This 177-nucleotide RNA was probed chemically with DMS and 2A3.
DMS adducts were read by reverse transcription with MarathonRT.
It was measured as part of the RMDB library OK2TRN.
The RNA was probed in 150 mM KOAc, 10 mM MgCl2 and 150 mM bicine (pH 8.5) at 24 C.
High DMS reactivity at an A or C suggests that its Watson-Crick edge is free.
RNA sequence: GGGAACGACUCGAGUAGAGUCGAAAAGCAAGACGAUAUCGACGCCUGUUUCGGCAGGCAGAAAUAAUAUCAAGUCUUGAAGAGUGACCAAAGCAGUAAACAUUUUGACUUCGGUCAAGAUGCCUAACUCAUAAUGCAGCUUCGGCUGCAUUAUGAGAAAAGAAACAACAACAACAAC
Reactivity to DMS in 0.01 (KOAc 150mM, MgCl2 10mM, bicine 150mM(pH8.5), 24C), signal-to-noise 2, nucleotides 027 to 126: g040c050a030a010g000a000c000g010a030u010a020u000c050g000a300c170g040c000c010u000g010u000u000u020c100g030g000c000a000g000g010c010a030g010a070a120a230u000a090a050u000a010u000c030a120a190g020u000c000u000u000g030a040a040g020a140g000u000g000a170c020c060a060a100a110g010c100a080g000u000a070a060a250c020a030u000u010u000u000g020a000c000u000u000c170g020g000u000c000a000a000g000a030u000g010c020c090u000a060a180
Reactivity to 2A3 in 0.01 (KOAc 150mM, MgCl2 10mM, bicine 150mM(pH8.5), 24C), signal-to-noise 2, nucleotides 027 to 126: g000c000a000a000g010a000c020g000a020u030a000u080c060g050a040c060g000c000c000u000g080u000u030u130c170g200g000c000a010g010g000c010a000g010a020a050a040u300a000a010u020a000u030c050a140a090g020u000c020u020u000g000a000a000g090a020g100u090g070a030c030c010a040a120a000g100c050a050g040u180a040a130a040c010a050u030u000u020u030g030a030c000u030u040c160g060g000u000c000a010a000g000a000u010g000c010c010u090a070a030